The data come from the RNA Mapping Database (RMDB), library OK3TST. Chemical mapping of a 207-nucleotide RNA with DMS and 2A3. Conditions: 150 mM KOAc, 10 mM MgCl2 and 150 mM bicine (pH 8.5), 24 C. For 2A3 the reverse transcriptase was SuperScript II with manganese.
RNA sequence: GGGAACGACUCGAGUAGAGUCGAAAACAUGUACCGCAAUGUCUGGGCGCUUUGUCCCGUCAGCUCUUGCCACUGUCGGAUCUAAAAAAAAAAGAGAAGAACAAAAUCUGUUUUGUCACAGAUGCAUCCCAUUAUGAAGACGGUUCGCACCGCUGUGCGAACGGGAAUUUUUCGAAAUUCCCGUUCGAAAAGAAACAACAACAACAAC
Reactivity to DMS in 0.01 (KOAc 150mM, MgCl2 10mM, bicine 150mM(pH8.5), 24C), signal-to-noise 2, nucleotides 027 to 156: c040a140u000g000u010a100c020c010g020c030a130a080u010g010u000c030u010g050g000g020c070g020c070u000u000u000g010u000c020c020c010g050u000c030a090g010c010u000c020u000u000g020c020c050a080c020u000g010u000c050g020g000a100u000c040u020a020a010a000a000a010a080a130a140a150a280g000a100g000a070a060g010a040a100c050a050a060a110a080u010c030u000g000u010u000u000u010g020u010c130a070c010a140g030a030u010g020c030a150u000c020c000c000a220u000u010a130u000g010a100a120g020a090c020g020g010u000u000c090g000c030a100c030c050g040c040u000g000u000g020
Reactivity to 2A3 in 0.01 (KOAc 150mM, MgCl2 10mM, bicine 150mM(pH8.5), 24C), signal-to-noise 5, nucleotides 027 to 156: c050a050u110g020u080a070c030c040g020c050a060a060u110g030u030c030u100g050g040g000c050g020c060u100u090u150g070u090c010c010c010g030u040c030a020g000c020u020c000u120u090g010c010c010a030c040u050g030u080c040g030g030a060u070c050u170a020a030a040a020a020a020a010a030a050a000g060a020g020a100a010g040a060a020c040a050a140a050a060u060c040u030g070u040u090u080u110g100u060c010a010c000a060g030a030u030g010c030a060u050c040c010c010a070u130u120a110u250g080a060a020g060a050c020g030g020u060u110c050g000c020a040c030c040g020c070u060g010u100g050